[RMDB]
RNA sequence: GGGAACGACUCGAGUAGAGUCGAAAAGAUAUGGAUCUCUAGCGUGCCGCAUGAUGAAGGGUCGGAAACGACCCGUAAGUCAUGAACUACGGUCGGGUCCUAAGUCAAAGAGUACUUCGGUACUCAAUCACAUCAAUGCGUUCGCGCAUUGAUGUGAAAAAGAAACAACAACAACAAC
Reactivity to DMS in 0.01 (KOAc 150mM, MgCl2 10mM, bicine 150mM(pH8.5), 24C), signal-to-noise 1, nucleotides 027 to 126: g020a060u000a300u010g000g000a020u000c030u030c030u000a120g000c140g000u000g010c060c160g000c030a010u010g000a020u000g000a080a300g000g000g080u000c000g040g000a070a170a230c000g020a000c000c010c020g060u020a050a300g000u000c040a020u000g010a100a050c160u000a100c010g000g000u000c180g000g000g010u000c000c000u000a040a080g020u020c080a080a030a080g020a010g000u000a000c000u000u000c240g030g010u000a000c000u000c000a070a080
Conditions: 150 mM KOAc, 10 mM MgCl2 and 150 mM bicine (pH 8.5), 24 C. This 177-nucleotide RNA was probed chemically with DMS.